[RMDB]
RNA sequence: GGGAACGACUCGAGUAGAGUCGAAAACCGUAGGACCACUGAGUCGAGGUGUGGAGGUAAUCUUCGAAAGAGGAUUACUACCCACCCACACUACCCACCGACUCAUUGGUCCUAAACGGAAAACGCAGUUACUCCGUUUCGACGGAGUAACUGCGAACUUUAACCUGACUUUCGAGUCAGGUUAAAGAAAAGAAACAACAACAACAAC
Reactivity to 2A3 in 0.01 (KOAc 150mM, MgCl2 10mM, bicine 150mM(pH8.5), 24C), signal-to-noise 1, nucleotides 027 to 156: c010c000g000u020a010g000g000a000c000c010a010c010u000g000a000g010u000c010g000a020g000g000u000g000u000g010g020a010g000g010u000a000a000u000c020u030u000c020g030a080a040a020g010a010g000g000a010u000u010a000c000u010a000c030c010c000a060c000c000c000a000c000a000c000u080a070c020c090c050a060c060c000g000a000c000u000c000a000u000u010g000g000u020c000c000u000a000a000a000c010g050g010a050a110a010a030c020g010c000a010g000u000u000a000c000u000c000c000g000u030u110u160c300g060a040c010g010g000a000g000u000a000a000c000u000g000c000g000a000a010
Reactivity to DMS in 0.01 (KOAc 150mM, MgCl2 10mM, bicine 150mM(pH8.5), 24C), signal-to-noise 1, nucleotides 027 to 156: c010c000g000u000a000g020g000a040c010c000a010c130u000g000a050g000u000c000g030a070g020g040u000g020u000g020g020a300g000g010u000a020a010u000c000u000u000c000g010a210a120a290g000a020g030g000a030u000u000a000c000u000a040c010c020c090a300c110c000c010a000c010a020c020u000a020c020c010c010a300c180c010g010a020c010u000c000a050u000u000g010g000u010c010c000u000a000a020a020c030g030g000a110a060a050a140c010g000c000a000g000u000u000a010c000u010c000c030g030u010u000u020c220g010a190c030g000g000a000g000u000a010a000c010u000g080c010g000a000a010
This 207-nucleotide RNA was probed chemically with 2A3 and DMS. For 2A3 the reverse transcriptase was SuperScript II with manganese. For DMS the reverse transcriptase was MarathonRT.